[RMDB]
RNA sequence: GGGAACGACUCGAGUAGAGUCGAAAAAGCUGCCUAUGGUACGCCAUAGGCAGCAAUGUGAACUUGAUGACUUAAAGGGGGCUGAAAUAAUCUGAUGAAAAAUGCCAUCCAUUUCCUGAUUCACAAAUUCUCACCGUUUAUUCGUAAACGGUGAGAAAAAAGAAACAACAACAACAAC
Reactivity to DMS in 0.01 (KOAc 150mM, MgCl2 10mM, bicine 150mM(pH8.5), 24C), signal-to-noise 1, nucleotides 027 to 126: a010g000c000u000g000c000c000u000a010u000g020g000u000a060c240g100c010c000a000u000a040g000g050c020a000g000c000a000a000u000g010u000g010a010a000c110u000u000g000a050u020g000a030c100u000u000a070a100a070g070g000g000g080g000c000u000g000a140a080a150u000a150a140u080c100u050g010a100u000g000a030a060a090a130a030u010g000c000c000a000u000c070c000a070u000u030u000c000c030u010g000a140u020u020c000a000c070a050a100a170
Reactivity to 2A3 in 0.01 (KOAc 150mM, MgCl2 10mM, bicine 150mM(pH8.5), 24C), signal-to-noise 2, nucleotides 027 to 126: a000g000c010u030g000c000c000u000a000u000g000g050u100a030c200g020c080c000a000u000a000g000g000c000a000g030c000a000a000u020g030u000g010a000a000c040u040u040g040a080u130g130a070c040u160u180a050a010a040g010g020g000g000g000c010u030g070a030a110a090u210a040a130u170c080u130g110a110u250g060a120a170a000a000a000u030g000c010c000a020u000c050c000a100u000u020u140c000c040u050g010a230u000u000c000a010c010a000a090a050